[RMDB]
RNA sequence: GGGAACGACUCGAGUAGAGUCGAAAAUGGCGUCCGAGCUGAUAAUAAUGCGUCGGGUGAUUGAUUUGCCACAUGUCGGAGGCGCCGUCAAUCGUGAGCGUGAAUCGUUUUGAACGCAUGGAAUAGACCCAAAAUUACGGUUCGCCGUAAUUUUGGGAAAAGAAACAACAACAACAAC
Reactivity to 2A3 in 0.01 (KOAc 150mM, MgCl2 10mM, bicine 150mM(pH8.5), 24C), signal-to-noise 3, nucleotides 027 to 126: u080g010g000c010g040u010c010c040g000a040g000c110u060g090a090u040a160a060u110a030a030u140g030c010g000u030c040g030g000g000u090g000a020u000u060g040a020u040u040u220g010c000c000a030c050a110u140g050u080c030g040g000a140g030g120c050g060c020c020g050u030c020a060a060u020c040g060u080g040a080g000c030g000u100g080a030a010u040c010g000u000u020u010u160g080a060a000c000g010c040a030u030g030g050a100a050u060a130g080a060
Reactivity to DMS in 0.01 (KOAc 150mM, MgCl2 10mM, bicine 150mM(pH8.5), 24C), signal-to-noise 2, nucleotides 027 to 126: u000g050g000c020g030u000c010c010g000a140g010c050u000g000a090u000a080a060u010a110a100u020g020c000g030u010c040g000g000g000u000g010a050u000u010g030a090u000u000u040g020c000c010a070c180a090u000g010u000c180g000g000a080g020g020c000g000c060c050g000u000c030a030a050u010c040g000u000g010a170g000c030g040u010g010a040a090u020c030g010u020u010u000u030g000a080a040c020g010c040a060u010g000g030a050a060u010a030g000a210